[RMDB]
RNA sequence: GGGAACGACUCGAGUAGAGUCGAAAAAUCGUGGAUUUCGCGGGUGUCCGCUCGUAAGUCUUUGAUUGUUGAGAAGAGUGCCGCCACGUGUCACCCCGCAUUUGCCACUAGUCGAGCCGCUUUUGCCAUCAGUCCGGUUUUGGCGCGGGCCGCCGCCGAAGAAAUCACUAUUCGUAGUGAUUUCUUCAAAAGAAACAACAACAACAAC
Reactivity to 2A3 in 0.01 (KOAc 150mM, MgCl2 10mM, bicine 150mM(pH8.5), 24C), signal-to-noise 2, nucleotides 027 to 156: a000u110c040g000u030g000g020a040u050u100u090c090g000c050g030g040g000u040g030u060c050c020g010c020u030c020g060u100a110a100g050u020c000u070u130u100g090a170u060u090g090u050u100g030a070g030a120a000g010a020g020u050g050c050c020g050c050c020a060c020g050u100g020u040c020a070c000c020c000c010g000c040a040u000u030u110g050c020c010a020c010u030a030g060u070c040g020a020g010c030c030g010c060u080u060u080u170g040c040c000a040u080c040a060g050u070c040c000g000g050u030u060u100u110g020g010c010g010c020g020g040g020c030c020g030c020c020g030c010c020
Reactivity to DMS in 0.01 (KOAc 150mM, MgCl2 10mM, bicine 150mM(pH8.5), 24C), signal-to-noise 1, nucleotides 027 to 156: a090u010c040g040u000g030g000a120u000u000u000c050g060c060g030g030g070u010g030u000c110c080g010c010u000c020g030u010a080a060g010u010c020u000u000u020g020a190u010u000g010u000u000g010a190g000a130a080g010a140g020u010g030c060c030g030c030c030a060c020g000u000g000u000c040a060c060c010c010c010g000c050a110u000u000u010g000c020c020a120c050u020a040g020u000c040g010a160g010c000c010g020c040u000u000u000u000g010c020c000a060u000c050a070g000u000c070c020g070g000u000u000u000u020g030g000c020g040c060g030g020g020c050c050g010c010c020g020c100c060

The record gives the reactivity of an RNA of 207 nucleotides to 2A3 and DMS. The reactions ran in a buffer of 150 mM KOAc, 10 mM MgCl2 and 150 mM bicine (pH 8.5), at 24 C. Values cover nucleotides 27 to 156. For DMS, 3,703 sequencing reads were counted. The 2A3 profile rests on 1,846 reads.